RNA sequence: GGGAACGACUCGAGUAGAGUCGAAAAGCGGUAUCCUCCCAAAGAGUAACGGAGGAGCGCGAAGGUGGGCUCAGCCCGGUUGGCAACCGGGUGUCGAGUGCAUGGGCAUAAGCCCGCCUAACUGUGAUAUACUGAAGCGUUUCGACGCUUCAGUAUAAAAAGAAACAACAACAACAAC
Reactivity to 2A3 in 0.01 (KOAc 150mM, MgCl2 10mM, bicine 150mM(pH8.5), 24C), signal-to-noise 4, nucleotides 027 to 126: g000c000g070g040u170a190u130c000c010u030c010c010c020a040a190a010g150a030g030u120a080a020c050g010g000a010g000g020a000g030c020g010c000g030a020a000g000g000u020g000g010g010c010u040c050a010g000c030c000c010g000g020u030u040g060g000c080a060a030c000c000g000g000g000u040g030u120c040g030a060g030u020g030c030a060u260g060g120g000c010a040u050a120a010g000c000c000c010g000c010c000u020a050a020c040u070g020u030g150a020
Reactivity to DMS in 0.01 (KOAc 150mM, MgCl2 10mM, bicine 150mM(pH8.5), 24C), signal-to-noise 4, nucleotides 027 to 126: g010c000g020g000u050a060u010c010c000u000c010c000c190a140a100a220g020a180g010u010a090a160c300g000g010a010g000g000a010g010c020g020c020g030a110a050g010g000u020g000g000g010c000u000c070a250g000c000c000c000g000g000u000u010g010g000c160a160a200c000c000g000g000g010u000g010u030c150g000a100g010u000g000c010a150u040g020g010g010c000a070u000a080a040g000c020c010c000g010c010c000u010a090a130c090u000g000u020g000a160